[RMDB]
RNA sequence: GGGAACGACUCGAGUAGAGUCGAAAACGAGUGCAAUAAAGACGCGGUUGACGAUCGGUAUGGAUGCCACCGUGACGGCUCAAUCACACAAGUGCCAACGAUAACGAGGCGCUCGCUAUUGCUGCGUAAAAGCGACGAUCGUUCGCGAUCGUCGCAACCAUUUGCACGUGUUCGCACGUGCAAAUGGAAAAGAAACAACAACAACAAC
Reactivity to 2A3 in 0.01 (KOAc 150mM, MgCl2 10mM, bicine 150mM(pH8.5), 24C), signal-to-noise 2, nucleotides 027 to 156: c060g020a050g070u060g020c020a050a070u040a150a110a030g080a010c060g020c020g030g070u060u070g020a010c030g020a050u070c020g000g070u140a130u170g040g080a060u110g020c040c020a030c010c020g010u040g040a030c020g030g020c010u040c050a040a030u070c020a010c000a010c000a050a110g030u020g030c010c000a110a080c060g020a050u040a130a090c040g000a050g040g000c020g000c020u000c020g010c020u020a040u020u130g040c030u040g040c010g020u060a040a030a090a130g000c000g000a000c000g000a000u000c010g010u060u060c180g000c010g050a000u010c000g000u000c000g030c000a000a000
The record gives the reactivity of an RNA of 207 nucleotides to 2A3. 2A3 adducts were read by reverse transcription with SuperScript II with manganese. The data come from the RNA Mapping Database (RMDB), library M2RFPK. The reactions ran in a buffer of 150 mM KOAc, 10 mM MgCl2 and 150 mM bicine (pH 8.5), at 24 C. Reactivities are given for positions 27 through 156.